[RMDB]
RNA sequence: GGGAACGACUCGAGUAGAGUCGAAAAGAAACAACCCAGAUCAGCAGCUAAGGUGCCUAAAUAACGCUCAGUGGAAAGGAUGUGGGAUUACACAGACAGUGAGGAUGUUGGCUUAGAAGCAGCCACCCGAGACUAAUAAAUUCGUUUAUUAGUCUCGAAAAGAAACAACAACAACAAC
Reactivity to 2A3 in 0.01 (KOAc 150mM, MgCl2 10mM, bicine 150mM(pH8.5), 24C), signal-to-noise 9, nucleotides 027 to 126: g090a010a090a010c050a020a050c020c010c000a010g030a090u060c030a000g060c000a000g010c030u100a150a040g080g030u060g040c000c010u140a190a140a100u160a100a040c050g010c030u020c020a050g030u070g060g050a090a050a040g070g020a050u070g010u060g050g000g030a030u040u110a040c070a010c000a030g110a080c010a030g050u030g080a060g070g010a070u100g040u130u050g030g010c020u030u060a040g020a090a010g050c040a010g010c010c010a010c000c010
Reactivity to DMS in 0.01 (KOAc 150mM, MgCl2 10mM, bicine 150mM(pH8.5), 24C), signal-to-noise 9, nucleotides 027 to 126: g010a130a090a090c150a100a110c030c020c020a100g010a080u010c060a070g010c050a050g010c040u010a080a090g010g020u000g020c030c030u010a050a080a070u010a070a100c110g010c030u000c050a050g010u010g000g010a060a090a080g000g000a070u010g010u010g010g000g010a090u010u020a070c100a040c040a040g010a070c070a060g010u000g000a070g010g010a090u010g010u010u000g010g010c040u000u010a070g010a080a080g010c130a050g010c020c030a070c090c080